[RMDB]
RNA sequence: GGGAACGACUCGAGUAGAGUCGAAAAGCGACGGUUUCCGAGGGCAUAAUAGGAACCCAGAAUACGGCAAAACAAGAGGUGGCCGCUGGGGCAAGCCUCAGUCUGCAAGAAAAUACUAUUGAUGCUAGUCGUAGGUACGAUUCGUCGUACCUACGACAAAAGAAACAACAACAACAAC
Reactivity to DMS in 0.01 (KOAc 150mM, MgCl2 10mM, bicine 150mM(pH8.5), 24C), signal-to-noise 1, nucleotides 027 to 126: g000c030g070a170c130g030g000u000u000u000c060c010g040a150g030g000g080c070a080u000a030a030u000a100g010g020a040a170c030c040c000a040g010a100a110u020a110c180g000g010c020a060a110a100a140c010a070a090g000a040g000g010u000g020g000c090c150g000c020u010g000g000g000g000c060a080a120g020c020c000u000c020a130g000u020c090u010g080c130a070a110g020a080a020a000a040u010a080c000u000a060u000u010g000a030u000g010c060u000a210
Reactivity to 2A3 in 0.01 (KOAc 150mM, MgCl2 10mM, bicine 150mM(pH8.5), 24C), signal-to-noise 1, nucleotides 027 to 126: g040c020g070a080c060g060g010u010u030u000c020c030g010a140g030g090g000c030a030u010a100a010u070a200g120g040a080a050c030c020c020a010g060a160a060u160a230c050g020g010c000a070a110a140a060c030a250a030g100a040g190g050u020g140g000c020c000g000c050u040g000g100g000g000c030a060a000g010c030c000u010c000a000g010u060c030u080g000c040a080a030g110a080a080a010a020u160a120c050u020a020u070u090g140a040u070g020c000u030a030

Chemical mapping of a 177-nucleotide RNA with DMS and 2A3.
As a SHAPE reagent, 2A3 marks flexible, mostly unpaired nucleotides at the ribose 2'-OH.
DMS adducts were read by reverse transcription with MarathonRT.
Reactivities are rounded to 0.1 and cut off at 0 and 3.